[RMDB]
RNA sequence: GGGAACGACUCGAGUAGAGUCGAAAACUGCACCUGCGACUACAGCCACCAGUCGAGAUCUCCACAAGCGAACCACCAGGCGGGCAGUGUGGCCGGCGUGCGGGAUUGGGAGUGGGGCGGCUGCUCCAACUACCCUUAGGUUCGCCUAAGGGUAGUUAAAAGAAACAACAACAACAAC
Reactivity to DMS in 0.01 (KOAc 150mM, MgCl2 10mM, bicine 150mM(pH8.5), 24C), signal-to-noise 5, nucleotides 027 to 126: c070u010g010c060a090c030c040u010g000c040g010a080c050u010a090c090a100g000c010c030a060c060c050a060g010u000c040g010a160g010a080u000c030u000c000c030a060c100a140a190g000c040g000a070a090c030c020a070c070c050a130g000g010c030g010g000g010c040a090g010u010g010u000g010g020c030c040g010g020c070g010u010g000c130g010g010g010a110u010u010g010g010g000a180g030u000g000g010g010g020c060g000g010c070u000g010c040u010c030c070
Reactivity to 2A3 in 0.01 (KOAc 150mM, MgCl2 10mM, bicine 150mM(pH8.5), 24C), signal-to-noise 3, nucleotides 027 to 126: c010u030g020c010a030c010c020u060g060c030g060a030c040u100a050c070a040g030c010c000a060c010c010a030g050u040c010g030a030g030a180u040c010u030c010c010a040c020a140a000g060c020g050a020a010c000c010a020c010c020a020g150g000c030g030g050g000c030a070g030u060g020u050g180g020c040c030g060g020c050g030u060g020c100g020g040g030a090u080u110g060g030g000a060g030u070g000g000g000g040c030g030g000c020u030g010c000u030c020c000